Conditions: 150 mM KOAc, 10 mM MgCl2 and 150 mM bicine (pH 8.5), 24 C. The record gives the reactivity of an RNA of 177 nucleotides to 2A3 and DMS.
RNA sequence: GGGAACGACUCGAGUAGAGUCGAAAAGAUAUGGACCCUAGCUCGAUAAGCUGGUCGGAAACGACCCAGCUUUUGACGAGCAAUGGGUCCUAAGUCAAAUCGCCUUACUCUUCGGAGUAAGGCGAAACACUAUUAGAUAGUUCGCUAUCUAAUAGUGAAAAGAAACAACAACAACAAC
Reactivity to 2A3 in 0.01 (KOAc 150mM, MgCl2 10mM, bicine 150mM(pH8.5), 24C), signal-to-noise 7, nucleotides 027 to 126: g010a010u040a020u100g000g000a000c000c000c010u010a010g020c000u010c040g230a260u030a240a010g000c010u010g000g000u010c000g000g020a040a030a010c010g010a010c020c100c020a000g000c010u020u020u030u150g190a070c020g000a000g010c030a010a020u020g000g000g000u000c000c000u000a000a000g000u000c010a000a010a120u040c000g000c010c000u000u000a000c000u020c010u040u120c300g130g000a000g000u000a010a000g000g000c000g000a000a000a000
Reactivity to DMS in 0.01 (KOAc 150mM, MgCl2 10mM, bicine 150mM(pH8.5), 24C), signal-to-noise 8, nucleotides 027 to 126: g000a030u000a260u010g000g000a010c000c000c000u000a300g000c000u000c000g030a140u000a020a020g000c000u000g000g010u000c000g000g000a070a070a130c000g000a010c120c070c070a000g010c000u000u000u000u000g010a160c090g000a010g000c000a300a060u000g000g010g010u000c000c000u000a000a070g000u000c020a080a100a140u000c010g010c000c000u000u010a000c000u000c000u000u010c180g010g000a020g000u000a000a000g010g010c000g000a000a020a060
For 2A3, 36,706 sequencing reads were counted.